[RMDB]
RNA sequence: GGGAACGACUCGAGUAGAGUCGAAAAGCUCUAUCCUUCGGGAUAGAGCAAACGCUACGAUUGACGGUGAAGCCGGACCUGAGCUUCAGCAUAGUCGGGCUAAAAGUCACAUGUUCGCAUGUGACAACGGAAUGAAUACCUUCGGGUAUUCAUUCCGAAAAGAAACAACAACAACAAC
Reactivity to DMS in 0.01 (KOAc 150mM, MgCl2 10mM, bicine 150mM(pH8.5), 24C), signal-to-noise 2, nucleotides 027 to 126: g010c000u000c000u000a010u000c000c000u000u000c280g020g020g000a000u000a000g000a000g010c020a000a020a060c150g000c010u000a060c010g020a030u000u010g000a050c140g000g000u000g000a010a000g010c000c020g020g010a120c180c200u000g000a110g050c010u000u000c010a010g000c040a040u000a060g000u010c000g000g000g030c020u000a060a100a070a050g010u000c000a000c000a000u000g000u010u000c230g030c000a000u000g010u010g000a000c000a030a110
Reactivity to 2A3 in 0.01 (KOAc 150mM, MgCl2 10mM, bicine 150mM(pH8.5), 24C), signal-to-noise 2, nucleotides 027 to 126: g010c000u010c000u000a000u000c000c000u000u090c200g060g000g000a000u010a000g010a000g030c000a010a000a010c050g000c010u300a150c000g020a030u030u020g120a060c070g110g030u030g030a000a000g010c040c000g140g060a240c030c130u170g040a040g010c010u010u020c020a010g010c010a000u060a060g020u020c000g000g000g070c000u060a050a060a080a000g010u010c000a000c000a010u020g030u060u060c230g000c080a010u000g000u000g010a000c000a010a030